[RMDB]
The data come from the RNA Mapping Database (RMDB), library M2PK50. Structure probing data (2A3 and DMS) for a 177-nucleotide construct. High 2A3 reactivity points to a flexible backbone, as in loops and unpaired stretches. The reactions ran in a buffer of 150 mM KOAc, 10 mM MgCl2 and 150 mM bicine (pH 8.5), at 24 C. For 2A3 the reverse transcriptase was SuperScript II with manganese.
RNA sequence: GGGAACGACUCGAGUAGAGUCGAAAAUGGACGUUGUUCGCAACGUCCACAUACUGAGACGUACGUUAAACGUAUCGCGGGCAAAAGUGCAGAUAGAAUAAGUACCUAUUGAGUUCGCUCAAUAGAAGCCUAAGCUUAAAUUCGUUUAAGCUUAGGCAAAAGAAACAACAACAACAAC
Reactivity to 2A3 in 0.01 (KOAc 150mM, MgCl2 10mM, bicine 150mM(pH8.5), 24C), signal-to-noise 9, nucleotides 027 to 126: u050g000g000a000c010g010u000u010g020u050u060c150g000c110a010a000c000g000u000c000c000a000c000a000u050a010c010u100g060a020g040a080c030g030u020a000c010g020u050u210a140a220a020c010g020u020a020u160c040g000c040g030g050g000c050a060a060a060a050g070u060g010c020a010g060a170u110a050g100a130a070u140a210a020g060u050a050c000c010u010a000u000u000g000a000g010u030u090c210g000c060u000c000a000a010u010a010g030a040a010
Reactivity to DMS in 0.01 (KOAc 150mM, MgCl2 10mM, bicine 150mM(pH8.5), 24C), signal-to-noise 8, nucleotides 027 to 126: u000g000g000a010c000g010u010u000g010u000u010c200g020c010a010a010c000g010u000c000c000a010c110a070u010a100c080u000g000a120g010a110c070g000u000a020c040g010u000u010a040a080a190c060g010u000a030u000c050g020c050g000g000g000c060a050a060a080a090g010u000g000c020a070g010a090u000a040g010a090a080u000a060a080g010u000a090c130c010u000a010u000u000g000a020g010u000u020c180g010c010u000c000a000a010u000a010g010a100a120